[RMDB]
RNA sequence: GGGAACGACUCGAGUAGAGUCGAAAAUGAGACGCACCCACAGACGGGAGCCUCCAGGAGGGUUUGAGGAGAACUCACCUCCAGAGGACCCCUUCAGCGAACAGAGGAGUCUCUACCUCGGAGGAGAACACUUAGGUCUUCGGACCUAAGAAAAGAAACAACAACAACAAC
Reactivity to DMS in 0.01 (KOAc 150mM, MgCl2 10mM, bicine 150mM(pH8.5), 24C), signal-to-noise 5, nucleotides 027 to 129: u050g010a040g000a060c030g000c110a120c000c000c000a100c140a060g000a030c130g000g000g020a100g040c000c000u030c000c050a130g020g020a030g000g080g000u030u060u070g000a020g000g000a270g050a130a150c010u020c010a010c020c010u010c000c000a170g000a000g000g000a050c030c010c020c000u000u000c030a020g000c050g030a070a050c100a070g000a070g000g040a190g030u010c010u000c020u050a050c080c030u020c020g040g020a070g040g010a080g000a080a100c160a080
Reactivity to 2A3 in 0.01 (KOAc 150mM, MgCl2 10mM, bicine 150mM(pH8.5), 24C), signal-to-noise 9, nucleotides 027 to 129: u150g000a020g010a000c050g010c090a090c000c010c010a030c030a040g040a010c040g000g000g020a080g040c000c000u000c000c030a170g010g010a030g040g070g050u140u200u300g030a010g030g040a120g060a150a070c000u000c010a040c000c000u000c010c000a000g000a000g000g000a020c010c000c000c000u040u040c020a040g020c010g050a040a020c020a050g080a050g070g010a020g020u010c000u010c020u110a140c000c020u030c030g030g010a030g040g020a070g020a050a010c060a000
The data come from the RNA Mapping Database (RMDB), library 15KLIB.
Structure probing data (DMS and 2A3) for a 170-nucleotide construct.
2A3 adducts were read by reverse transcription with SuperScript II with manganese.
Values cover nucleotides 27 to 129.
The reactions ran in a buffer of 150 mM KOAc, 10 mM MgCl2 and 150 mM bicine (pH 8.5), at 24 C.